Chemical mapping of a 177-nucleotide RNA with DMS. Conditions: 150 mM KOAc, 10 mM MgCl2 and 150 mM bicine (pH 8.5), 24 C. For DMS, 5,011 sequencing reads were counted.

RNA sequence: GGGAACGACUCGAGUAGAGUCGAAAAGAUAUGGACACGGAGGGAGCUUUGACGACUAUUGUAUAGCUGUCGGAAACGACAGCUAUACAAUAGUCGUCUGAGCAUCGAUCUCCAGUGUCCUAAGUCAGAACUAGAAUAAGUUCGCUUAUUCUAGUUCAAAAGAAACAACAACAACAAC
Reactivity to DMS in 0.01 (KOAc 150mM, MgCl2 10mM, bicine 150mM(pH8.5), 24C), signal-to-noise 3, nucleotides 027 to 126: g010a080u000a300u000g010g000a010c000a010c010g010g000a020g010g000g000a020g040c000u000u000u000g000a020c000g010a030c000u010a000u010u010g010u000a010u000a000g000c000u010g020u000c000g000g010a090a110a240c010g030a010c000a000g010c000u000a000u000a000c000a000a020u000a010g010u000c000g000u000c000u000g000a000g020c000a250u010c210g010a050u020c000u010c000c000a100g050u000g010u000c000c000u000a000a110g010u010c080a170

For DMS the reverse transcriptase was MarathonRT.
Source: RMDB library TTRINS, as collected in RNAgym.